[RMDB]
RNA sequence: GGGAACGACUCGAGUAGAGUCGAAAAAUACAAAUGUUUGGUGCGUAUGAGUGAGCACAUUAAUGUCACCUAUUUCGACCAAAACUUUCAACACUCAUAGCUUUAGCGAUCAGCUUUUGUCAGUAGACGCAUAGCGACUAUUCGUAGUCGCUAUGCGAAAAGAAACAACAACAACAAC
Reactivity to 2A3 in 0.01 (KOAc 150mM, MgCl2 10mM, bicine 150mM(pH8.5), 24C), signal-to-noise 5, nucleotides 027 to 126: a000u260a010c070a050a040a040u240g090u060u030u030g100g000u050g080c010g000u040a010u010g050a080g020u030g010a070g110c060a040c010a090u110u300a110a130u100g020u010c020a040c020c010u100a140u050u190u210c120g010a080c010c000a020a040a010a100c060u050u170u110c090a120a040c040a030c000u030c010a050u060a030g050c030u070u050u080a070g040c040g120a110u110c090a030g000c000u030u080u070u000g090u020c050a100g060u060a050g080a090
Reactivity to DMS in 0.01 (KOAc 150mM, MgCl2 10mM, bicine 150mM(pH8.5), 24C), signal-to-noise 2, nucleotides 027 to 126: a070u010a110c200a110a040a090u040g020u000u000u000g000g030u030g000c040g000u000a000u010g040a050g000u030g000a050g030c040a110c080a080u010u040a090a050u000g000u000c010a070c070c030u090a100u000u000u000c050g000a020c010c030a010a060a050a030c030u030u030u000c150a200a080c000a090c000u000c000a000u040a110g000c050u000u020u000a060g000c040g000a110u010c070a150g030c000u030u020u000u050g000u000c060a110g050u110a080g000a150